[RMDB]
Annotation
Conditions: 150 mM KOAc, 10 mM MgCl2 and 150 mM bicine (pH 8.5), 24 C. This 177-nucleotide RNA was probed chemically with DMS and 2A3. Values cover nucleotides 27 to 126. For 2A3, 1,827 sequencing reads were counted.

RNA sequence: GGGAACGACUCGAGUAGAGUCGAAAAUAGGUACUAGUACCUCUAGAGGAUCUAGGCCUCUGAUCGGCGCGAUCUGCGCGGCGCGAUCUACGAGGCCGCGCUGCAGGCCCGUACCAUGAUCUGCGUACCCUUGGAGCUUAUUCGUAAGCUCCAAGGGAAAAGAAACAACAACAACAAC
Reactivity to DMS in 0.01 (KOAc 150mM, MgCl2 10mM, bicine 150mM(pH8.5), 24C), signal-to-noise 2, nucleotides 027 to 126: u020a030g030g020u000a050c030u000a050g000u010a290c020c010u020c160u010a190g020a070g000g010a300u000c010u000a020g000g000c010c000u010c050u010g000a070u010c020g020g000c000g000c020g000a140u000c110u000g010c030g000c020g000g020c040g030c010g010a040u000c030u010a060c220g010a060g010g000c020c010g000c100g020c060u010g020c050a220g000g020c040c030c030g010u000a030c040c020a110u000g000a080u000c030u000g030c050g020u000a140
Reactivity to 2A3 in 0.01 (KOAc 150mM, MgCl2 10mM, bicine 150mM(pH8.5), 24C), signal-to-noise 1, nucleotides 027 to 126: u110a020g040g000u060a240c000u000a010g020u070a100c030c000u050c020u140a220g050a010g100g000a050u000c010u030a000g030g000c000c010u010c030u030g000a060u030c020g080g070c000g010c020g060a120u030c080u140g080c040g020c050g110g020c140g000c010g000a020u030c020u040a050c090g030a060g030g000c030c000g000c060g000c010u050g010c010a000g040g000c000c040c000g000u020a040c030c000a050u100g040a040u050c040u120g030c040g020u130a130
DMS adducts were read by reverse transcription with MarathonRT. Values are in units of 0.01, from 0 to 300, in steps of 10.